[RMDB]
RNA sequence: GGGAACGACUCGAGUAGAGUCGAAAAGUCGACGCCCUGCAAUUCAAGCAGACUCGAUUACAAUGUUUGCCGCCGACGUCACGCAUGUCACGUGGUUAUUUGUACUUCAGUCUGGUUGGAUUGUAGGCCUAGUACAAGACUUCGGUCUUGUACUAGGAAAAGAAACAACAACAACAAC
Reactivity to DMS in 0.01 (KOAc 150mM, MgCl2 10mM, bicine 150mM(pH8.5), 24C), signal-to-noise 3, nucleotides 027 to 126: g010u000c050g000a120c210g000c180c010c020u000g000c000a010a000u000u000c010a000a030g000c010a010g000a010c000u010c190g030a010u000u000a020c020a010a010u000g020u010u000u010g010c010c000g020c020c130g000a020c020g000u000c040a180c300g020c170a020u000g000u000c020a060c200g010u000g000g000u000u010a040u000u000u000g010u000a030c150u000u000c110a020g000u000c000u000g000g010u000u000g000g000a010u000u000g000u000a010g010g010
Reactivity to 2A3 in 0.01 (KOAc 150mM, MgCl2 10mM, bicine 150mM(pH8.5), 24C), signal-to-noise 5, nucleotides 027 to 126: g120u050c030g030a070c100g060c010c000c000u000g000c000a000a010u010u020c000a010a030g080c000a000g000a000c010u060c110g010a000u000u010a000c010a010a020u060g050u150u130u220g100c000c010g030c010c030g000a020c010g020u040c030a040c300g110c090a020u050g000u010c010a010c140g020u010g010g060u140u130a120u060u030u010g020u000a030c070u020u030c010a010g020u000c010u030g140g030u000u000g000g000a010u000u010g000u000a000g000g000

About this RNA: The record gives the reactivity of an RNA of 177 nucleotides to DMS and 2A3. Reactivities are given for positions 27 through 126.